[RMDB]
RNA sequence: GGGAACGACUCGAGUAGAGUCGAAAAAGAACUCUUAUCUUCCUGCUUAGAAGAGGAGUCUCCUGGACGCCCCGCCCGGUCGGGAUGGGCCGCAGUUCCCGACGAGGAGCCCGCAGGUGGGAGGAUCAAAUCUGACGGUUCGCCGUCAGAAAAAGAAACAACAACAACAAC
Reactivity to DMS in 0.01 (KOAc 150mM, MgCl2 10mM, bicine 150mM(pH8.5), 24C), signal-to-noise 5, nucleotides 027 to 129: a010g020a000a000c060u020c040u040u030a110u010c030u020u000c010c100u030g040c120u090u040a140g040a100a040g040a120g050g000a040g040u020c020u020c000c000u000g040g030a150c160g010c130c030c020c070g010c030c020c060g050g050u070c140g000g000g040a070u000g000g030g070c070c080g000c000a150g050u020u000c030c030c030g000a080c100g010a060g030g010a070g020c090c000c030g000c120a060g010g080u020g030g000g040a040g030g040a070u030c000a090a100a090
Reactivity to 2A3 in 0.01 (KOAc 150mM, MgCl2 10mM, bicine 150mM(pH8.5), 24C), signal-to-noise 2, nucleotides 027 to 129: a010g080a070a020c030u060c030u060u110a060u040c010u000u010c000c020u050g050c070u140u140a110g030a120a020g040a140g030g020a050g020u030c020u010c010c020u020g040g030a030c020g030c000c000c000c010g020c000c000c010g180g050u190c080g060g000g000a000u030g010g010g010c000c040g040c020a020g010u070u010c000c000c000g000a010c020g010a030g000g000a000g000c000c000c010g030c030a000g000g000u000g020g000g010a010g000g020a020u070c060a010a050a020